[RMDB]
RNA sequence: GGGAACGACUCGAGUAGAGUCGAAAAUACUACGCGGCCUCCCACCUCUCUGCCCGGAGCCGGCCGGCCGCCCAGAGACCCGGCCGGCUCCCACCGUCGCUUGGUCGACGACCCGCCGCGCCAACAACAUAGGUAGUAGUUUCGACUACUACCUAUGAAAAGAAACAACAACAACAAC
Reactivity to DMS in 0.01 (KOAc 150mM, MgCl2 10mM, bicine 150mM(pH8.5), 24C), signal-to-noise 1, nucleotides 027 to 126: u000a130c060u000a110c030g010c050g000g010c020c040u020c010c020c020a190c030c070u000c020u000c040u000g000c060c110c110g020g050a020g120c020c030g000g010c000c020g000g010c050c070g010c010c040c050a140g010a080g000a080c190c060c030g000g000c000c020g000g000c030u000c000c010c060a030c080c020g000u000c010g010c000u010u010g020g020u010c000g000a030c040g000a100c020c010c020g020c040c020g020c000g000c040c060a030a040c090a070a190